RNA sequence: GGGAACGACUCGAGUAGAGUCGAAAACAAGAGUAGAGGCAACAACUCUUUCAGUCAUAAGUGUAAUUGCAGUUGCUAUAGCAAAUGCUAAGGCAGCAUGACCACUUGGCAUUCCUCCUUUUAGAGGGCUCCCGCGUAAUUUCGAUUACGCGGGAGCAAAAGAAACAACAACAACAAC
Reactivity to 2A3 in 0.01 (KOAc 150mM, MgCl2 10mM, bicine 150mM(pH8.5), 24C), signal-to-noise 2, nucleotides 027 to 126: c060a070a000g000a010g100u150a000g090a040g210g000c020a110a040c010a000a000c060u000c000u000u010u040c110a060g000u000c020a110u030a270a030g000u010g030u110a120a090u000u010g000c050a030g110u210u040g000c030u030a030u060a020g000c030a110a040a300u300g000c020u040a080a000g000g040c000a010g000c000a000u000g000a030c000c020a000c000u030u000g000g000c000a010u040u050c000c010u000c010c000u060u150u010u090a100g120a030g060g070
Conditions: 150 mM KOAc, 10 mM MgCl2 and 150 mM bicine (pH 8.5), 24 C. This 177-nucleotide RNA was probed chemically with 2A3. It was measured as part of the RMDB library OK1LIB.